[RMDB]
RNA sequence: GGGAACGACUCGAGUAGAGUCGAAAAUUUAAGUCAUACUAUCUAGCUUAAUUUUCGGUCAUUUUUGAUAGUGUAGCCUUGCGUUUGACAAGCGUUGAGGUGAAAUAAAGUCUUAGCCUUGCUUUUGAGUUUUGGAAGAUGAGCGAAGUAGGGUGAAGGGAUCUUACACGUUCGCGUGUAAGAUCCCAAAAGAAACAACAACAACAAC
Reactivity to 2A3 in 0.01 (KOAc 150mM, MgCl2 10mM, bicine 150mM(pH8.5), 24C), signal-to-noise 1, nucleotides 027 to 156: u010u010u000a020a000g000u000c000a000u000a010c000u000a010u000c000u000a000g010c000u010u020a000a050u040u120u120u070c270g060g000u120c180a300u010u180u070u070u290g000a000u000a000g010u030g000u010a000g000c000c000u000u000g000c060g050u090u040u000g020a000c040a110a000g010c000g060u070u270g020a000g000g020u020g000a000a000a000u180a040a160a010g040u000c000u020u110a020g000c000c020u000u030g000c020u000u090u110u180g150a130g080u120u100u060u100g080g070a130a150g020a080u100g000a040g120c000g000a000a010g000u010a000g000g000g000u040g030a080a050